RNA sequence: GGGAACGACUCGAGUAGAGUCGAAAAGCAGCAGAUAUACCUGUCGGGUGGUGAUGCAGGAUAUUGCACAGGACCAUUCAUCCAGUGUCAGUUCUGUCUCAGGGUGUUCUGUCAGGAAUGCGGCAAAACUCCUUAGGGAGUUCGCUCCCUAAGGAGUAAAAGAAACAACAACAACAAC
Reactivity to DMS in 0.01 (KOAc 150mM, MgCl2 10mM, bicine 150mM(pH8.5), 24C), signal-to-noise 3, nucleotides 027 to 126: g020c050a040g020c030a030g020a090u000a080u000a090c030c010u000g030u000c130g000g000g030u000g000g010u000g000a050u000g010c030a020g000g000a020u000a040u000u000g000c010a030c050a080g020g000a030c090c090a080u010u000c150a300u000c030c020a060g040u010g000u000c160a120g010u010u000c020u000g000u000c110u000c040a080g010g000g030u000g010u010u000c020u000g020u000c080a060g000g010a060a100u000g000c030g020g020c040a080a080a070
Reactivity to 2A3 in 0.01 (KOAc 150mM, MgCl2 10mM, bicine 150mM(pH8.5), 24C), signal-to-noise 2, nucleotides 027 to 126: g020c020a000g000c000a010g070a060u060a030u040a270c020c000u030g010u110c020g030g040g010u080g040g040u030g010a040u030g030c000a010g040g020a010u100a130u100u090g000c000a030c010a040g010g020a010c000c050a100u170u180c040a020u050c020c000a040g020u030g090u090c030a030g020u070u010c000u010g100u020c010u000c030a020g070g030g000u100g060u090u040c010u020g060u020c010a020g010g060a090a070u050g000c000g000g000c020a030a050a040